[RMDB]
RNA sequence: GGGAACGACUCGAGUAGAGUCGAAAAGUCGCCGCGUCAACAUCAACGCCCAGCGCGGGCGAGGGAAGCGUCCUACGGGGGUGACCCAUUCGCCGGCAUGGUAGAGGACGGCAAGAUUGCCGCGACGACCGUGCUGAUCAUUCGUGAUCAGCACGGUAAAAGAAACAACAACAACAAC
Reactivity to 2A3 in 0.01 (KOAc 150mM, MgCl2 10mM, bicine 150mM(pH8.5), 24C), signal-to-noise 1, nucleotides 027 to 126: g000u030c020g050c070c010g020c020g010u010c000a040a140c030a110u070c000a000a110c050g040c010c000c000a080g030c300g070c110g210g030g000c000g000a020g000g020g010a010a000g030c000g170u150c000c000u000a070c100g060g000g000g000g070u030g040a050c000c000c040a120u110u060c020g000c010c000g080g000c000a050u070g020g000u080a030g050a040g130g010a020c000g050g010c040a050a000g040a110u120u180g000c000c010g020c000g010a000c020g000
Reactivity to DMS in 0.01 (KOAc 150mM, MgCl2 10mM, bicine 150mM(pH8.5), 24C), signal-to-noise 2, nucleotides 027 to 126: g000u000c010g030c000c080g000c000g000u000c010a060a070c180a130u010c020a100a140c070g000c040c060c010a140g000c160g070c100g010g020g050c000g000a070g010g010g000a150a230g000c000g000u010c000c000u000a080c130g020g020g020g000g040u020g000a300c030c000c000a110u000u010c050g030c040c010g030g040c110a040u000g000g030u000a150g010a110g000g000a070c030g010g000c160a070a080g010a140u000u020g000c020c050g000c000g000a020c060g000